[RMDB]
RNA sequence: GGGAACGACUCGAGUAGAGUCGAAAAACGCUCGUUCGCGAGCGUAAAAAACCGUAGGCACUCAUUAGACAUGGUUUAGGCAUUUCGAAAGAGAUGCCUUAUUAGACCAACAGCUAAUAGGUGCCUAAACGGAAAAACGUAAUGUUCGCAUUACGAAUAUGUGUCUUACGUUCGCGUAAGACACAUAAAAAGAAACAACAACAACAAC
Reactivity to DMS in 0.01 (KOAc 150mM, MgCl2 10mM, bicine 150mM(pH8.5), 24C), signal-to-noise 1, nucleotides 027 to 156: a010c000g020c000u010c010g020u010u010c300g040c000g000a020g080c020g020u010a000a060a080a050a040a130c000c020g000u000a010g000g000c000a000c000u000c000a070u000u000a000g040a060c080a300u000g010g060u000u000u010a030g020g000c020a020u000u000u000c000g000a290a070a280g000a050g040a000u000g000c000c000u030u000a000u010u010a130g010a040c000c010a010a070c030a150g080c000u010a000a000u000a020g000g010u000g010c000c000u000a000a020a010c030g020g000a040a020a010a080a150c030g030u000a020a050u000g000u000u020c300g000c020a060u010u000a030c000g010a100a110
Reactivity to 2A3 in 0.01 (KOAc 150mM, MgCl2 10mM, bicine 150mM(pH8.5), 24C), signal-to-noise 2, nucleotides 027 to 156: a000c030g000c010u010c010g030u090u070c140g000c000g220a000g000c000g010u010a000a000a000a010a010a010c020c000g020u030a040g000g000c000a000c000u070c020a040u040u000a000g020a110c030a100u130g030g010u040u090u060a000g000g000c000a000u000u000u000c030g060a120a010a060g000a020g010a020u000g010c030c000u000u000a050u000u050a010g010a010c010c000a050a160c060a090g040c010u000a010a020u020a060g010g030u000g010c010c000u000a000a000a010c000g000g070a120a010a000a000a010c010g000u000a010a030u040g030u120u130c200g000c180a000u000u030a000c010g030a090a020
Chemical mapping of a 207-nucleotide RNA with DMS and 2A3. The reactions ran in a buffer of 150 mM KOAc, 10 mM MgCl2 and 150 mM bicine (pH 8.5), at 24 C.